Source information: An RNA of 207 nucleotides, treated with 2A3 and DMS and read out base by base. The reactions ran in a buffer of 150 mM KOAc, 10 mM MgCl2 and 150 mM bicine (pH 8.5), at 24 C. Values cover nucleotides 27 to 156. For DMS the reverse transcriptase was MarathonRT.

RNA sequence: GGGAACGACUCGAGUAGAGUCGAAAAUCCACUAUGAAUCUAGUCACUAAAUAAACACAAUUAGCUACUGUGUGUAAUAGUGAGUGUUGAUAACACAAAAUAAUAGUAUAGUUUUGGAAGAUGAUACGCGCCCUUGCUCCGUUCGCGGAGCAAGGAAGAUUUGUCAAUGGUUCGCCAUUGACAAAUCAAAAGAAACAACAACAACAAC
Reactivity to 2A3 in 0.01 (KOAc 150mM, MgCl2 10mM, bicine 150mM(pH8.5), 24C), signal-to-noise 3, nucleotides 027 to 156: u000c020c000a020c030u120a140u190g120a120a110u040c070u060a060g070u010c000a000c000u000a030a000a040u040a020a030a000c020a000c000a010a100u120u090a080g050c060u110a050c010u040g000u020g000u000g000u020a020a040u020a030g000u000g030a020g020u030g020u020u050g080a080u150a220a020c040a010c030a010a090a060a060u250a100a040u070a080g110u080a060u070a160g030u060u050u070u140g050g020a100a050g020a150u120g060a060u090a150c080g020c020g040c050c000c000u000u000g000c000u000c000c000g020u070u050c090g040c020g100g020a000g000c000a000a000g000g000a000a000
Reactivity to DMS in 0.01 (KOAc 150mM, MgCl2 10mM, bicine 150mM(pH8.5), 24C), signal-to-noise 2, nucleotides 027 to 156: u010c010c010a060c020u020a090u010g020a160a110u000c040u010a160g010u010c000a040c000u010a000a000a060u000a090a240a020c000a020c000a020a040u000u000a300g020c240u020a020c060u000g030u010g000u010g000u000a130a300u010a020g020u000g010a080g010u000g000u010u000g010a170u010a080a070c020a080c000a060a040a050a080u010a070a160u020a110g000u010a120u000a100g010u000u000u000u000g000g010a050a110g020a060u010g000a140u000a010c040g000c050g030c090c000c020u000u000g000c000u010c000c010g010u000u000c220g020c050g040g020a020g010c000a010a000g020g010a020a020